[RMDB]
Structure probing data (2A3) for a 177-nucleotide construct.
The RNA was probed in 150 mM KOAc, 10 mM MgCl2 and 150 mM bicine (pH 8.5) at 24 C.
The data come from the RNA Mapping Database (RMDB), library OK1LIB.
For 2A3 the reverse transcriptase was SuperScript II with manganese.
RNA sequence: GGGAACGACUCGAGUAGAGUCGAAAAGGUUCUGUCGGUGCUUGAAACAAUUUUGUCUUCUCCAUAUUACUAUAUCUCUAGAGUCAAUAAUUUUAUAUGAGGAACUACUGAACUCAAUCACUUGCUGGAAAGACUGGUGGUUCGCCACCAGUCUUUCAAAAGAAACAACAACAACAAC
Reactivity to 2A3 in 0.01 (KOAc 150mM, MgCl2 10mM, bicine 150mM(pH8.5), 24C), signal-to-noise 2, nucleotides 027 to 126: g020g060u100u030c070u000g140u060c030g130g060u020g000c100u030u090g090a100a080a080c040a110a130u000u070u220u100g030u000c010u000u000c020u150c040c110a140u160a230u300u110a110c050u000a050u060a160u170c000u000c030u070a070g010a050g100u050c090a020a030u140a130a040u230u100u080u150a250u060a140u220g030a000g040g000a000a000c000u100a090c000u070g060a010a000c000u030c060a060a200u000c000a000c000u020u100g050c000u060g090